Source information: Structure probing data (DMS and 2A3) for a 177-nucleotide construct. High 2A3 reactivity points to a flexible backbone, as in loops and unpaired stretches. Reactivities are given for positions 27 through 126.
RNA sequence: GGGAACGACUCGAGUAGAGUCGAAAAGUGCACUGGGGUCAGCAUAGAUACUUGUGUGUACGUAUAUUUGUGGUUUUUGUUAUUUUUCUACUUAUAGAUGGCUAAAAUCUGAGUUUGAAAGGUGGCCGAUUUAGUAAAACUUCGGUUUUACUAAAUCAAAAGAAACAACAACAACAAC
Reactivity to DMS in 0.01 (KOAc 150mM, MgCl2 10mM, bicine 150mM(pH8.5), 24C), signal-to-noise 4, nucleotides 027 to 126: g000u010g020c020a030c030u010g010g010g010g010u000c020a130g010c200a110u010a100g000a050u000a060c020u000u000g010u000g020u000g010u000a020c040g020u000a080u020a090u000u010u000g020u010g010g000u000u000u000u000u010g010u000u000a070u000u000u000u000u010c010u000a010c040u000u000a100u000a060g000a030u000g010g010c160u000a070a060a080a040u000c020u000g010a040g000u000u000u000g000a030a030a020g000g010u000g010g020c040c300
Reactivity to 2A3 in 0.01 (KOAc 150mM, MgCl2 10mM, bicine 150mM(pH8.5), 24C), signal-to-noise 1, nucleotides 027 to 126: g020u020g000c010a040c050u020g000g060g030g000u000c020a040g020c090a140u100a130g030a020u180a300c040u060u010g050u000g010u020g000u170a000c000g050u040a110u030a050u150u070u100g050u100g050g000u010u020u010u030u090g000u060u000a020u050u040u000u000u010c000u010a030c000u040u060a060u030a270g020a010u030g030g050c040u030a130a090a000a000u000c010u020g030a020g060u100u260u090g010a000a030a000g010g000u000g040g040c030c050